[RMDB]
RNA sequence: GGGAACGACUCGAGUAGAGUCGAAAAGAUAUGGAUCCCUGGUACCAGCAAUGAUGUGGCUCGGAAACGAGCCAUUGAGCUGACCACAUGGGAUCCUAAGUCAAACAGUGUUCUUCGGAACACUGAACUGAGUAAUGUCGUUCGCGACAUUACUCAGAAAAGAAACAACAACAACAAC
Reactivity to 2A3 in 0.01 (KOAc 150mM, MgCl2 10mM, bicine 150mM(pH8.5), 24C), signal-to-noise 2, nucleotides 027 to 126: g000a020u070a060u260g000g000a000u000c020c020c110u100g030g000u130a260c300c070a010g040c000a090a300u090g050a010u080g080u010g050g000c000u010c010g060g110a000a060a110c030g010a020g000c000c010a000u000u010g010a000g000c030u010g040a060c000c010a140c050a200u200g000g000g000a000u000c000c000u000a060a020g000u010c010a110a050a110c000a030g020u000g040u000u000c000u070u100c260g110g010a000a000c000a010c000u000g000a070a040
Reactivity to DMS in 0.01 (KOAc 150mM, MgCl2 10mM, bicine 150mM(pH8.5), 24C), signal-to-noise 2, nucleotides 027 to 126: g030a110u000a300u000g000g000a030u000c000c000c000u010g030g000u020a250c300c040a010g030c010a180a210u020g010a070u000g000u010g000g000c000u000c000g000g000a060a060a130c010g000a000g020c000c010a000u000u000g000a110g000c000u000g010a080c050c070a080c300a070u010g000g000g000a020u000c000c010u000a000a070g000u000c030a160a100a280c020a010g010u000g000u000u000c000u020u000c190g020g000a000a030c000a000c000u000g000a050a200